[RMDB]
RNA sequence: GGGAACGACUCGAGUAGAGUCGAAAACUGUCUCAGUGUUCAUCCCCUGAUCAAGGAUGCCCGAAACGGUGAGCCGGAAAGCAAAUUAAAUAACGUCAACCCAUCGGGACGGUUGGCCAGUUAAGAAAAAACCGGGGAGUCUUCGGACUCCCCGGAACAAAUACAACAUGUUCGCAUGUUGUAUUUGAAAAGAAACAACAACAACAAC
Reactivity to 2A3 in 0.01 (KOAc 150mM, MgCl2 10mM, bicine 150mM(pH8.5), 24C), signal-to-noise 3, nucleotides 027 to 156: c010u020g070u080c010u000c050a170g120u050g000u120u040c020a010u010c040c000c000c000u060g030a100u050c020a010a040g030g000a030u030g030c010c010c010g040a060a040a000c020g000g070u030g010a010g050c020c040g050g060a120a060a030g050c070a090a040a090u150u160a070a110a150u180a080a030c020g000u010c010a000a010c000c000c000a030u050c040g000g000g030a010c020g010g000u010u010g010g000c000c010a030g030u080u080a130a080g070a080a140a030a050a010a030c010c000g010g000g000g000a000g000u010c000u070u110c180g070g000a000c000u000c010c000c000c060g000g000a000a000
Reactivity to DMS in 0.01 (KOAc 150mM, MgCl2 10mM, bicine 150mM(pH8.5), 24C), signal-to-noise 1, nucleotides 027 to 156: c010u040g000u010c040u000c020a190g020u000g020u010u030c030a040u000c000c000c010c000u010g010a130u010c120a190a100g010g010a040u000g010c010c000c010g010a060a040a050c080g010g010u000g010a080g010c040c030g000g020a090a060a150g010c050a100a060a150u010u000a040a060a150u000a090a080c040g040u010c020a030a030c030c000c010a090u010c100g020g020g010a110c070g000g020u000u000g020g010c020c050a120g000u010u000a080a180g000a010a090a120a100a090a140c030c000g000g000g030g060a050g000u000c010u000u000c250g040g000a010c010u010c000c000c000c000g010g010a000a020
Chemical mapping of a 207-nucleotide RNA with 2A3 and DMS.
The reactions ran in a buffer of 150 mM KOAc, 10 mM MgCl2 and 150 mM bicine (pH 8.5), at 24 C.
Values are in units of 0.01, from 0 to 300, in steps of 10.
For DMS the reverse transcriptase was MarathonRT.
Source: RMDB library M2RFPK, as collected in RNAgym.